[RMDB]
Structure probing data (DMS and 2A3) for a 177-nucleotide construct. In probing experiments dimethyl sulfate is read out at A N1 and C N3, which are open when not base-paired. Values are in units of 0.01, from 0 to 300, in steps of 10. For 2A3, 2,471 sequencing reads were counted. It was measured as part of the RMDB libraries RFM100 and RFMREP. Reactivities are given for positions 27 through 126. The reactions ran in a buffer of 150 mM KOAc, 10 mM MgCl2 and 150 mM bicine (pH 8.5), at 24 C. For 2A3 the reverse transcriptase was SuperScript II with manganese.

RNA sequence: GGGAACGACUCGAGUAGAGUCGAAAACUGCCCAGAGUGCCUUCUAGAUCCUGGGUCAGGCGCCAAGCUCCCCAGCAUCAUGCAGGAAGCUGCAGCCCCGCAGAGUUAGGACAGCUCAUUUGGCACCGCCAGACCAAAGAUUCGUCUUUGGUCUGGCAAAAGAAACAACAACAACAAC
Reactivity to DMS in 0.01 (KOAc 150mM, MgCl2 10mM, bicine 150mM(pH8.5), 24C), signal-to-noise 3, nucleotides 027 to 126: c180u030g010c020c070c030a080g000a140g010u020g010c030c030u010u000c110u000a130g000a060u030c070c010u020g000g000g010u010c090a050g010g040c090g020c110c070a090a030g000c010u000c100c000c010c030a090g000c080a130u020c090a100u050g000c000a080g000g000a120a040g000c010u000g020c130a130g000c000c040c050c040g000c130a050g020a110g000u050u020a090g000g000a060c030a060g010c030u000c030a100u010u010u020g000g010c040a050c040c160
Reactivity to 2A3 in 0.01 (KOAc 150mM, MgCl2 10mM, bicine 150mM(pH8.5), 24C), signal-to-noise 3, nucleotides 027 to 126: c010u070g020c000c010c000a020g020a000g010u100g060c010c020u090u030c010u070a060g020a080u020c010c010u020g020g000g040u050c020a020g060g000c020g060c080c070a030a020g000c010u050c010c000c010c000a020g030c000a020u120c010a010u160g020c030a030g010g060a090a020g040c020u020g010c060a050g030c000c000c000c010g030c110a020g000a020g040u060u060a050g060g090a030c000a010g010c010u000c030a140u070u070u080g020g020c020a010c010c020